Structure probing data (2A3 and DMS) for a 177-nucleotide construct.
The 2A3 profile rests on 11,898 reads.
2A3 adducts were read by reverse transcription with SuperScript II with manganese.
RNA sequence: GGGAACGACUCGAGUAGAGUCGAAAAGUGCGACAUUUCGAUGUCGCACAAACCCAAAUGGUGGCACCUAACUAAACUAGCCGGGAAAAGCCAGAUGCCAACGUCCUUAGCCCUUCGGGGCUAAGAAUAUCCACAUAAUGUUCGCAUUAUGUGGAUAAAAAGAAACAACAACAACAAC
Reactivity to 2A3 in 0.01 (KOAc 150mM, MgCl2 10mM, bicine 150mM(pH8.5), 24C), signal-to-noise 6, nucleotides 027 to 126: g000u000g000c010g000a000c010a010u050u060u110c200g110a010u010g000u010c000g010c000a000c010a000a000a000c010c000c000a020a070a030u130g030g000u030g000g010c030a150c110c010u060a090a090c030u070a100a060a190c030u040a040g060c030c050g020g020g010a080a130a010a000g030c020c010a020g020a080u100g020c010c010a040a030c030g070u100c010c000u000u010a000g000c020c000c010u010u060c180g050g000g000g000c000u000a000a010g000a000a000
Reactivity to DMS in 0.01 (KOAc 150mM, MgCl2 10mM, bicine 150mM(pH8.5), 24C), signal-to-noise 7, nucleotides 027 to 126: g010u000g010c010g000a000c000a010u000u000u010c190g020a010u000g010u000c000g020c010a000c000a010a080a110c010c000c000a090a090a080u010g010g010u000g010g000c040a060c020c010u000a080a080c060u000a050a080a170c070u000a070g020c100c080g000g010g000a070a070a120a060g010c020c040a050g010a030u000g000c020c020a060a060c120g010u010c110c000u000u000a010g010c000c000c000u000u010c180g020g010g010g000c010u000a000a000g000a100a090